[RMDB]
RNA sequence: GGGAACGACUCGAGUAGAGUCGAAAAUGACAUGAUCCAAUACGGAAAUAAUUUAUUAGUGUAUGUAGCUAGUUAUAAUGAAGUAGAUCAACUGUCAAAAUUACUAGUAGCUCGUGAAUUCAAUGUCUCUACUGUAGGGGUUCGCCCCUACAGUAGAAAAAGAAACAACAACAACAAC
Reactivity to DMS in 0.01 (KOAc 150mM, MgCl2 10mM, bicine 150mM(pH8.5), 24C), signal-to-noise 2, nucleotides 027 to 126: u000g050a050c010a040u010g000a030u010c020c200a150a110u040a040c090g000g040a110a100a060u010a040a060u050u010u000a020u000u000a060g030u010g000u010a080u070g010u010a270g010c000u000a000g000u000u000a040u000a060a230u000g000a240a020g000u000a110g010a110u010c050a030a050c090u000g000u000c010a000a070a110a030u040u000a030c020u000a050g000u000a100g000c020u030c040g000u010g000a060a070u000u000c050a050a050u040g000u000c050
Reactivity to 2A3 in 0.01 (KOAc 150mM, MgCl2 10mM, bicine 150mM(pH8.5), 24C), signal-to-noise 3, nucleotides 027 to 126: u100g000a040c020a030u040g020a030u040c010c030a090a190u220a140c050g020g060a050a000a080u150a040a040u150u040u090a100u010u120a080g040u040g030u080a170u250g090u080a060g010c010u000a000g030u030u000a040u030a070a070u060g020a030a010g010u130a050g050a170u060c120a050a060c040u140g040u140c000a020a040a010a010u020u020a000c000u000a030g070u020a030g010c000u000c010g050u050g050a050a080u120u050c050a100a010u040g060u030c010
Structure probing data (DMS and 2A3) for a 177-nucleotide construct. DMS (dimethyl sulfate) methylates the pairing face of unpaired adenines and cytosines. DMS adducts were read by reverse transcription with MarathonRT. Conditions: 150 mM KOAc, 10 mM MgCl2 and 150 mM bicine (pH 8.5), 24 C. It was measured as part of the RMDB library OK1LIB. The 2A3 profile rests on 1,432 reads.